[RMDB]
RNA sequence: GGGAACGACUCGAGUAGAGUCGAAAAGGCGCCGGCUGGGCAACAUUCCGAGGGGACCGUCCCUCGGUAAUGGCGAAUGGGACCCACAAAUCUCUCUAGAUUCCGAUAGAGAAUCGAGAGAAAGGUGACUUAGCUCUAGGUUCGCCUAGAGCUAAGUAAAAGAAACAACAACAACAAC
Reactivity to DMS in 0.01 (KOAc 150mM, MgCl2 10mM, bicine 150mM(pH8.5), 24C), signal-to-noise 1, nucleotides 027 to 126: g010g000c080g030c000c030g010g030c000u010g000g000g000c060a050a130c020a010u000u020c020c000g010a020g010g020g000g020a190c270c250g010u030c040c010c000u000c000g000g020u030a000a000u000g000g020c110g030a050a140u020g000g010g020a120c020c020c030a110c070a110a080a110u000c020u000c000u000c000u040a110g020a010u000u000c000c020g020a190u020a140g000a220g000a030a000u010c000g000a020g000a000g010a030a040a100g000g010u000g000
Annotation
Structure probing data (DMS) for a 177-nucleotide construct. The RNA was probed in 150 mM KOAc, 10 mM MgCl2 and 150 mM bicine (pH 8.5) at 24 C. For DMS, 655 sequencing reads were counted.